[RMDB]
RNA sequence: GGGAACGACUCGAGUAGAGUCGAAAAGAUAUGGACGUUCCAGGGAGAUCGUAUUCGGAAACGAAUACGGAUCUUUGAUCUGGACGUCCUAAGUCAAAGCGAGGGAAUGGUUCGCCAUUCCCUCGCAUCUUUUCUAACUCUUCGGAGUUAGAAAAGAAAAAGAAACAACAACAACAAC
Reactivity to 2A3 in 0.01 (KOAc 150mM, MgCl2 10mM, bicine 150mM(pH8.5), 24C), signal-to-noise 1, nucleotides 027 to 126: g000a000u000a000u020g010g010a000c010g090u300u200c030c010a000g000g020g000a020g000a000u000c000g020u010a000u000u000c000g000g000a000a000a000c000g000a000a000u010a010c020g070g020a000u000c000u300u160u010g010a000u030c020u000g010g000a000c000g010u000c000c000u000a000a000g010u000c020a050a110a070g000c000g030a000g050g010g040a020a020u030g040g060u100u300c300g030c030c030a010u000u000c010c030c000u000c000g000c000a010
Reactivity to DMS in 0.01 (KOAc 150mM, MgCl2 10mM, bicine 150mM(pH8.5), 24C), signal-to-noise 1, nucleotides 027 to 126: g010a000u000a010u000g000g000a000c000g010u010u030c000c000a010g000g000g010a000g030a010u000c000g010u000a010u000u000c000g000g000a000a000a020c010g010a000a000u000a000c000g000g010a000u000c000u000u010u000g000a020u000c010u010g010g000a020c000g000u000c000c000u010a000a050g000u000c010a130a120a140g010c000g030a010g000g000g000a030a020u000g000g000u000u010c300g020c010c000a000u010u000c000c000c000u000c000g000c000a010